Structure probing data (2A3) for a 177-nucleotide construct. For 2A3 the reverse transcriptase was SuperScript II with manganese. Source: RMDB library OK1LIB, as collected in RNAgym.
RNA sequence: GGGAACGACUCGAGUAGAGUCGAAAAUAUGGGCGUUGAGCACACGCAGCCGGAGCGCGGCCGCAAGCUGGUGAUUGAUAUCGGCGGUGGUUCAACCGAGCUGGUCAUUGGCGAAGAUUUUGAGCCCGGUGCGAGCUGGGUUCGCCCAGCUCGCACCAAAAGAAACAACAACAACAAC
Reactivity to 2A3 in 0.01 (KOAc 150mM, MgCl2 10mM, bicine 150mM(pH8.5), 24C), signal-to-noise 1, nucleotides 027 to 126: u280a200u070g000g010g000c100g040u100u210g000a000g000c000a030c000a000c140g270c170a070g050c000c000g030g010a210g010c100g000c110g010g000c000c030g220c130a040a090g000c000u000g000g040u100g000a080u230u150g130a180u120a000u180c000g040g000c000g000g090u000g000g100u000u170c000a080a080c000c000g030a010g000c000u000g000g100u050c000a030u070u040g000g000c000g000a210a000g140a300u300u300u170u300g070a000g000c000c000c000